[RMDB]
RNA sequence: GGGAACGACUCGAGUAGAGUCGAAAAGUACGGUCUCAAAACACAAAAUAGAUGGUUGACGUCGUCUAUAUCACUUUAAUAGUGAGAUCGCUAUGAAAGUAUAGCUAGGUACACCUACCUAGCUGAAGAUAUAGAGUCAAUUCGUUGGCUCUAUAUCAAAAGAAACAACAACAACAAC
Reactivity to 2A3 in 0.01 (KOAc 150mM, MgCl2 10mM, bicine 150mM(pH8.5), 24C), signal-to-noise 9, nucleotides 027 to 126: g070u050a020c010g010g010u000c010u000c000a100a160a110a040c210a020c070a040a160a030a020u030a010g020a010u010g050g100u060u220g110a070c120g040u060c000g000u000c020u010a030u020a030u150c040a040c090u100u140u150a140a130u110a110g110u040g020a020g010a030u040c010g000c070u030a050u090g090a120a060a010g060u100a060u040a150g000c000u000a000g000g010u050a040c050a120c090c020u020a000c000c000u000a000g000c000u000g000a020a010
Reactivity to DMS in 0.01 (KOAc 150mM, MgCl2 10mM, bicine 150mM(pH8.5), 24C), signal-to-noise 9, nucleotides 027 to 126: g010u010a050c050g000g000u000c010u010c010a060a070a120a110c280a100c230a090a060a120a050u010a030g000a030u010g010g010u010u010g020a130c240g010u010c020g010u010c010u000a010u000a060u020c140a080c090u000u010u010a070a060u020a050g010u000g000a030g010a010u020c010g020c130u000a020u010g000a080a050a050g000u010a210u010a050g010c000u000a000g000g000u000a040c170a140c230c180u000a040c000c000u000a010g000c000u000g000a080a060

Structure probing data (2A3 and DMS) for a 177-nucleotide construct. It was measured as part of the RMDB library OK1LIB. The reactions ran in a buffer of 150 mM KOAc, 10 mM MgCl2 and 150 mM bicine (pH 8.5), at 24 C. For 2A3 the reverse transcriptase was SuperScript II with manganese.